[RMDB]
RNA sequence: GGGAACGACUCGAGUAGAGUCGAAAAGAUAUGGACAUCCCAGGGAGGCCAUCGGAAACGAUGGGCCGAGGAUCUGGAGAUGUCCUAAGUCAAAACGACCGAUAACAGUUCGCUGUUAUCGGUCGAACAAAAUGUAAAUGUUCGCAUUUACAUUUUGAAAAGAAACAACAACAACAAC
Reactivity to DMS in 0.01 (KOAc 150mM, MgCl2 10mM, bicine 150mM(pH8.5), 24C), signal-to-noise 8, nucleotides 027 to 126: g000a050u000a300u000g000g010a020c000a000u000c000c000c000a030g000g000g000a030g020g010c000c000a030u000c000g000g000a120a090a200c010g010a010u000g020g030g040c000c000g000a050g000g000a020u010c000u000g010g000a150g010a000u000g000u000c000c000u000a010a060g010u010c040a080a070a130a230c020g000a000c000c000g000a010u000a000a010c000a010g010u000u010c230g020c000u000g010u010u000a000u000c000g000g010u000c000g000a020a080
Reactivity to 2A3 in 0.01 (KOAc 150mM, MgCl2 10mM, bicine 150mM(pH8.5), 24C), signal-to-noise 4, nucleotides 027 to 126: g010a010u080a050u150g000g000a000c000a000u010c020c000c000a000g000g000g010a010g000g000c010c010a000u000c010g010g050a080a050a040c010g000a010u070g070g150g030c010c000g010a090g010g000a000u000c000u000g000g010a300g000a210u000g000u000c000c000u010a030a010g030u000c020a010a000a100a200c020g000a010c000c010g000a000u000a010a000c000a000g050u120u160c270g110c140u000g010u010u010a000u000c000g000g000u000c000g000a010a000
Source information:
The data come from the RNA Mapping Database (RMDB), library TTRDEL. This 177-nucleotide RNA was probed chemically with DMS and 2A3. For 2A3, 15,918 sequencing reads were counted. Conditions: 150 mM KOAc, 10 mM MgCl2 and 150 mM bicine (pH 8.5), 24 C.